The record gives the reactivity of an RNA of 207 nucleotides to DMS and 2A3. The RNA was probed in 150 mM KOAc, 10 mM MgCl2 and 150 mM bicine (pH 8.5) at 24 C. It was measured as part of the RMDB library RNAMAK. For 2A3 the reverse transcriptase was SuperScript II with manganese.
[RMDB]
RNA sequence: GGGAACGACUCGAGUAGAGUCGAAAAUGACCUCUUCGGAGGUCAAAAAAGCGUACUACCGAGGAGGAACUGGGAGGCUGAGAUCCCAAAUAGGAUCUGAGCCGAGGAUCAGUUCUACCCACCCUCGGUAUCGCAAAAACCACGCUUCGGCGUGGAACGUCAGUAUAGAAUUCGUUCUAUACUGACGAAAAGAAACAACAACAACAAC
Reactivity to DMS in 0.01 (KOAc 150mM, MgCl2 10mM, bicine 150mM(pH8.5), 24C), signal-to-noise 3, nucleotides 027 to 156: u000g020a040c010c010u010c010u000u000c250g050g030a030g010g010u010c000a010a010a080a110a040a090g000c020g010u000a070c110u000a040c010c010g020a040g000g000a300g020g000a060a020c020u020g000g010g010a160g030g030c020u000g010a030g010a030u000c000c000c020a050a120a190u000a050g000g000a020u000c000u000g000a040g020c020c000g010a050g040g000a080u000c030a010g000u000u000c020u000a040c000c020c040a300c140c000c000u020c000g020g000u000a010u000c020g070c020a070a050a050a090a120c010c000a000c000g030c010u000u010c300g060g020c000g050u000g010g010a000a010
Reactivity to 2A3 in 0.01 (KOAc 150mM, MgCl2 10mM, bicine 150mM(pH8.5), 24C), signal-to-noise 1, nucleotides 027 to 156: u100g000a020c000c000u000c000u030u010c100g180g020a000g000g000u020c000a000a000a010a000a000a000g040c040g010u060a060c020u000a010c020c000g000a000g010g000a030g010g000a000a000c010u010g010g000g030a000g000g050c000u000g030a010g000a020u030c000c020c000a080a120a080u160a040g000g010a000u000c000u080g070a000g020c000c020g030a050g000g010a010u010c000a000g000u000u000c010u070a090c020c020c000a040c010c000c000u000c000g000g000u000a000u010c010g020c000a060a000a000a000a100c000c000a010c000g000c000u090u100c250g100g000c010g010u010g000g010a030a010